[RMDB]
Structure probing data (DMS) for a 177-nucleotide construct. The reactions ran in a buffer of 150 mM KOAc, 10 mM MgCl2 and 150 mM bicine (pH 8.5), at 24 C. The DMS profile rests on 979 reads.
RNA sequence: GGGAACGACUCGAGUAGAGUCGAAAAAAAAGAUAUGGAUGUGUUUGUCAGCUCUGUUGAGAGGCACUCGGAAACGAGUGAACUACCUUGUAAGCAGAGCUUGGAUUUAACACAUCCUAAGUCAAAAGAUAGGACUCUUGUUCGCAAGAGUCCUAUCAAAAGAAACAACAACAACAAC
Reactivity to DMS in 0.01 (KOAc 150mM, MgCl2 10mM, bicine 150mM(pH8.5), 24C), signal-to-noise 1, nucleotides 027 to 126: a070a090a170a050g040a040u000a300u020g010g000a000u000g040u000g000u000u000u000g000u000c020a000g000c000u000c010u000g020u000u010g010a280g010a020g030g000c030a030c000u040c010g000g000a150a110a240c010g030a020g000u020g000a070a040c090u000a300c000c000u000u000g010u000a240a050g000c000a000g010a000g000c000u000u000g010g010a070u010u000u010a010a030c000a130c000a030u000c000c000u000a000a020g000u000c040a100a080a080a110